[RMDB]
RNA sequence: GGGAACGACUCGAGUAGAGUCGAAAACUUUGCCUGUUUAUUAGAUUCUAAAUAUUAUGUUUGGAAUCAAUUUAAGCAGAGAUUUGCAGAACAACACAACAUGCAUUGCGUGUUUGUGGAGUUUAGCUGUUAAAGACUUGUUCGCAAGUCUUUAACAAAAAGAAACAACAACAACAAC
Reactivity to 2A3 in 0.01 (KOAc 150mM, MgCl2 10mM, bicine 150mM(pH8.5), 24C), signal-to-noise 9, nucleotides 027 to 126: c020u110u050u130g050c000c010u010g010u010u010u000a020u020u040a050g000a000u000u000c000u030a020a040a030u170a130u300u280a200u300g030u000u000u010g010g000a000a000u000c000a010a010u060u040u020a010a000g000c020a000g060a020g040a150u080u060u240g010c030a020g020a050a010c010a010a000c000a000c000a000a000c000a000u000g030c100a160u040u300g010c010g010u040g020u040u130u150g000u010g000g000a030g000u000u000u030a020g000c030
Reactivity to DMS in 0.01 (KOAc 150mM, MgCl2 10mM, bicine 150mM(pH8.5), 24C), signal-to-noise 7, nucleotides 027 to 126: c040u010u020u010g000c050c010u000g010u000u000u000a000u000u000a300g000a010u000u000c000u000a010a000a020u000a140u010u040a090u050g010u000u000u000g010g000a020a000u000c010a070a070u010u010u000a020a020g010c000a000g000a120g000a130u010u020u010g010c010a300g010a010a000c000a030a230c000a000c000a010a010c000a010u000g010c000a220u010u030g020c000g040u010g010u010u000u010g040u000g000g000a290g010u000u000u000a080g010c030